[RMDB]
RNA sequence: GGGAACGACUCGAGUAGAGUCGAAAAGAUGACUUUCCCCCAUUGGUUGGGAAAAGUCCCGGAACCAGGAAAUGGGAAAGAGACGGUAGAAAAGAGCGAGCCUCCCAGUUUUCGAGUAGUCCCGGACAGGCCUAAACGUUCGCGUUUAGGAAAAGAAACAACAACAACAAC
Reactivity to 2A3 in 0.01 (KOAc 150mM, MgCl2 10mM, bicine 150mM(pH8.5), 24C), signal-to-noise 9, nucleotides 027 to 129: g050a050u150g010a020c010u010u010u010c010c010c010c000c030a130u070u210g090g020u060u080g010g010g020a030a130a030a040g110u030c000c000c010g030g050a010a020c010c010a010g010g040a010a060a060u130g010g010g030a000a080a010g080a010g010a010c060g010g060u130a050g130a080a130a060a010g080a010g030c050g010a010g010c000c010u020c010c000c000a030g020u030u020u030u060c020g010a010g010u040a010g000u020c000c000c000g000g020a050c050a030g060g050
Reactivity to DMS in 0.01 (KOAc 150mM, MgCl2 10mM, bicine 150mM(pH8.5), 24C), signal-to-noise 9, nucleotides 027 to 129: g000a080u050g000a060c030u000u030u010c030c010c010c180c060a190u030u020g030g040u000u000g030g010g010a030a040a050a040g010u020c020c030c040g000g050a090a090c050c040a080g020g020a020a040a060u010g000g000g000a030a060a070g020a100g000a070c060g010g030u000a070g030a050a070a090a080g020a080g010c080g020a040g010c080c040u000c000c010c040a060g020u030u010u000u000c000g010a080g020u000a080g000u000c030c020c010g000g020a100c170a090g050g000